[RMDB]
Chemical mapping of a 207-nucleotide RNA with 2A3 and DMS.
Values cover nucleotides 27 to 156.
For 2A3 the reverse transcriptase was SuperScript II with manganese.
RNA sequence: GGGAACGACUCGAGUAGAGUCGAAAAGUGAACGAUCUCGGUUGUUUCUCUGAAGGCAAGAUCACCCCGUCCGAUGCGGAAGUUCGUGCUUCCGUCGAACGCGAAAGUCGGACGGCGGCCAUGAGUCAAUAUGUUUAAGGCUUCGGCCUUAAACAAAUAUUAAGUUCGGAUUCGUCCGAACUUAAUAAAAAGAAACAACAACAACAAC
Reactivity to 2A3 in 0.01 (KOAc 150mM, MgCl2 10mM, bicine 150mM(pH8.5), 24C), signal-to-noise 3, nucleotides 027 to 156: g130u130g070a140a040c040g010a080u050c030u040c120g020g000u000u000g000u020u030u000c030u000c080u080g140a190a070g060g020c030a060a000g000a060u100c020a030c000c000c010c000g000u000c000c000g020a010u020g020c000g000g020a000a010g000u140u300c170g140u300g070c000u010u010c010c000g010u020c020g090a120a030c060g030c030g180a140a060a000g030u010c000g000g000a010c000g000g000c000g000g010c010c030a080u080g020a010g040u060c020a050a050u060a060u230g010u000u000u000a010a000g000g000c000u020u050c240g080g000c000c000u000u000a000a000a000c000a000a000a000
Reactivity to DMS in 0.01 (KOAc 150mM, MgCl2 10mM, bicine 150mM(pH8.5), 24C), signal-to-noise 2, nucleotides 027 to 156: g020u010g010a080a120c040g010a060u000c000u000c010g000g040u010u010g000u010u000u000c000u010c020u000g020a160a150g030g060c030a070a140g010a150u000c040a080c010c020c010c010g030u000c000c010g010a040u000g000c040g000g000a030a040g020u010u000c230g040u000g010c000u000u010c010c010g000u000c030g000a090a140c120g030c100g000a100a140a220g030u000c040g030g010a070c030g010g010c100g010g000c040c020a070u000g000a280g030u000c030a090a160u000a120u000g020u000u000u000a010a010g000g010c020u000u000c300g050g020c000c030u010u000a000a000a010c000a010a040a160

Conditions: 150 mM KOAc, 10 mM MgCl2 and 150 mM bicine (pH 8.5), 24 C. In probing experiments dimethyl sulfate is read out at A N1 and C N3, which are open when not base-paired.